[RMDB]
RNA sequence: GGGAACGACUCGAGUAGAGUCGAAAACGGUAACCGGCAGGCCACCGAGUUCGUGCCGAUCAACGGUGUGAGUGCCGAGGCGGUCGCCGACGCGGCCCAGCUGUCGAGCUUGGCCGACGAAACUCCGGGAGAGUAGUAGUUUCGACUACUACUCUCCAAAAGAAACAACAACAACAAC
Reactivity to 2A3 in 0.01 (KOAc 150mM, MgCl2 10mM, bicine 150mM(pH8.5), 24C), signal-to-noise 4, nucleotides 027 to 126: c010g000g000u020a060a030c030c000g070g030c090a140g050g000c020c020a010c020c020g030a010g030u050u050c030g030u090g120c060c050g030a100u160c070a180a250c010g010g000u040g010u050g070a100g050u110g090c050c030g020a110g000g050c010g010g000u010c020g010c020c000g020a030c020g000c000g010g000c010c010c010a010g000c020u140g220u300c140g180a020g000c000u010u010g020g000c020c000g020a010c010g030a040a040a020c040u000c030c030g060
Reactivity to DMS in 0.01 (KOAc 150mM, MgCl2 10mM, bicine 150mM(pH8.5), 24C), signal-to-noise 4, nucleotides 027 to 126: c020g020g020u010a070a080c100c010g020g010c030a180g030g030c030c040a050c040c030g010a190g000u000u000c020g020u000g000c110c050g000a110u010c200a110a190c030g000g010u000g020u010g010a070g000u000g000c070c030g000a140g000g010c020g010g020u000c030g020c000c010g010a200c040g020c000g010g000c000c010c070a040g000c010u000g010u020c260g000a030g000c000u010u000g000g000c010c010g030a020c040g000a110a050a150c100u000c000c060g010
Conditions: 150 mM KOAc, 10 mM MgCl2 and 150 mM bicine (pH 8.5), 24 C. Chemical mapping of a 177-nucleotide RNA with 2A3 and DMS. It was measured as part of the RMDB library OK2TRN. Reactivities are given for positions 27 through 126. The 2A3 profile rests on 4,734 reads. For 2A3 the reverse transcriptase was SuperScript II with manganese.